The record gives the reactivity of an RNA of 177 nucleotides to DMS and 2A3.

RNA sequence: GGGAACGACUCGAGUAGAGUCGAAAAUCGACUUCCUUCGGGAAGUCGAAAAUAACGGUCGGCUCAUGAAGCUAGUCGAUCAUGCUGCUCGACCUAGACUAAAAAGAAUCUCGUUCGCGAGAUUCAACACGUUAGAGAUGUUCGCAUCUCUAACGUGAAAAGAAACAACAACAACAAC
Reactivity to DMS in 0.01 (KOAc 150mM, MgCl2 10mM, bicine 150mM(pH8.5), 24C), signal-to-noise 2, nucleotides 027 to 126: u000c000g010a020c000u010u000c000c000u010u000c180g020g020g000a020a000g010u000c000g000a000a000a070a040u020a080a110c230g020g000u000c000g010g000c000u000c010a010u000g020a030a110g010c030u010a090g030u000c100g000a080u000c000a010u000g000c220u000g030c020u010c000g000a000c000c010u000a090g010a220c120u010a050a050a080a090a070g000a020a000u000c000u000c000g010u000u010c190g010c010g000a010g000a010u000u000c010a080a170
Reactivity to 2A3 in 0.01 (KOAc 150mM, MgCl2 10mM, bicine 150mM(pH8.5), 24C), signal-to-noise 3, nucleotides 027 to 126: u010c000g000a000c000u010u000c010c010u020u040c110g040g000g010a010a000g000u000c010g000a000a000a000a000u030a030a050c060g000g020u000c000g010g000c000u000c000a010u010g020a020a020g070c100u100a050g300u210c020g030a070u030c000a010u010g090c080u020g000c050u090c150g000a000c000c000u000a040g050a050c040u080a060a050a000a070a070g010a000a010u000c010u000c000g020u040u020c190g000c010g100a000g010a000u000u000c000a000a010